[RMDB]
About this RNA:
Structure probing data (DMS and 2A3) for a 177-nucleotide construct. DMS adducts were read by reverse transcription with MarathonRT. The reactions ran in a buffer of 150 mM KOAc, 10 mM MgCl2 and 150 mM bicine (pH 8.5), at 24 C. For 2A3, 4,524 sequencing reads were counted.
RNA sequence: GGGAACGACUCGAGUAGAGUCGAAAAAAGAUAUGGAGUUUACAGAGCUCGAUUGGAUGACGAAGAACUCGCUCGGAAACGAGCGAGGGAGUCAUCUAGAGAGCGACGAAGUAAACUCCUAAGUCAACAGUAUAGGACAGUUCGCUGUCCUAUACUGAAAAGAAACAACAACAACAAC
Reactivity to DMS in 0.01 (KOAc 150mM, MgCl2 10mM, bicine 150mM(pH8.5), 24C), signal-to-noise 5, nucleotides 027 to 126: a100a090g000a050u000a300u000g000g000a020g010u000u010u010a000c000a070g000a220g010c010u000c000g010a300u020u000g020g010a010u000g000a010c000g000a110a180g000a170a260c000u000c000g010c000u000c000g010g000a140a100a160c010g000a000g010c000g010a010g010g020g000a050g000u000c000a000u000c000u000a010g000a300g010a010g040c000g010a130c280g000a070a110g000u000a000a010a000c010u000c000c010u000a010a060g000u000c040a110a280
Reactivity to 2A3 in 0.01 (KOAc 150mM, MgCl2 10mM, bicine 150mM(pH8.5), 24C), signal-to-noise 2, nucleotides 027 to 126: a000a020g050a020u040a050u130g010g000a010g000u030u020u010a010c010a020g050a020g040c010u010c000g100a190u110u240g010g000a000u010g000a000c030g220a300a110g030a060a010c000u000c000g000c000u000c010g020g040a080a070a030c020g000a010g020c000g010a000g030g000g000a010g000u010c000a000u000c000u000a000g020a000g000a000g000c010g020a060c020g040a090a040g010u000a000a010a010c000u000c000c000u000a050a020g050u000c000a010a040